[RMDB]
RNA sequence: GGGAACGACUCGAGUAGAGUCGAAAACUAUGUGCUUUCUACUUUUCCUUUGUAUCAAUCUUAUUUGAAAUCUGUCUUUCUUUAUAAGGUGACAGAAAUGGCCACCAGAAUCAUAUUAAGCUUGGAAAAAGGGAGGUACUUUUUCCCAGUCAGCCCAUCGUAAAUAGUGCUUCGGCACUAUUUACGAAAAAGAAACAACAACAACAAC
Reactivity to 2A3 in 0.01 (KOAc 150mM, MgCl2 10mM, bicine 150mM(pH8.5), 24C), signal-to-noise 2, nucleotides 027 to 156: c080u050a080u090g000u030g010c000u070u130u130c040u030a110c010u070u000u100u160c030c000u080u110u070g120u080a100u110c050a070a040u000c120u120u100a110u110u070u060g050a090a100a040u030c000u000g070u010c010u040u240u010c030u080u180u110a180u060a170a050g030g000u010g010a000c000a020g010a060a040a010u020g040g000c080c040a030c000c000a070g090a130a070u070c020a010u030a000u180u100a050a030g020c010u050u030g010g050a000a000a050a020a000g000g000g020a030g000g000u030a050c000u000u070u000u000u000c000c000c010a010g080u050c020a000g020c060c080c000a060
Chemical mapping of a 207-nucleotide RNA with 2A3.
Values cover nucleotides 27 to 156.
The RNA was probed in 150 mM KOAc, 10 mM MgCl2 and 150 mM bicine (pH 8.5) at 24 C.
2A3 is a SHAPE reagent: it acylates the 2'-hydroxyl of flexible nucleotides of all four kinds.